[RMDB]
RNA sequence: GGGAACGACUCGAGUAGAGUCGAAAAGAUAUGGAGUGAACUACUCUUAUCUUUGCGUUGAAAAGGAACGGUAAGUCGGAAACGACUUACCGUUCCUUGGAGCAAAGGUUUGGAGCACUCCUAAGUCGUAGAUACAUCUCUUCGGAGAUGUAUCUACAAAAGAAACAACAACAACAAC
Reactivity to DMS in 0.01 (KOAc 150mM, MgCl2 10mM, bicine 150mM(pH8.5), 24C), signal-to-noise 1, nucleotides 027 to 126: g020a100u020a300u010g010g000a040g000u010g020a090a070c080u020a300c030u000c000u000u010a000u000c020u000u000u010g010c000g000u000u000g010a130a090a010a000g000g010a010a020c000g000g020u000a000a000g030u000c000g000g020a150a120a220c000g000a050c000u000u000a030c000c000g000u000u000c000c000u000u000g000g000a090g000c000a000a010a030g000g020u000u000u020g000g000a030g000c010a020c000u000c010c000u010a070a160g020u000c110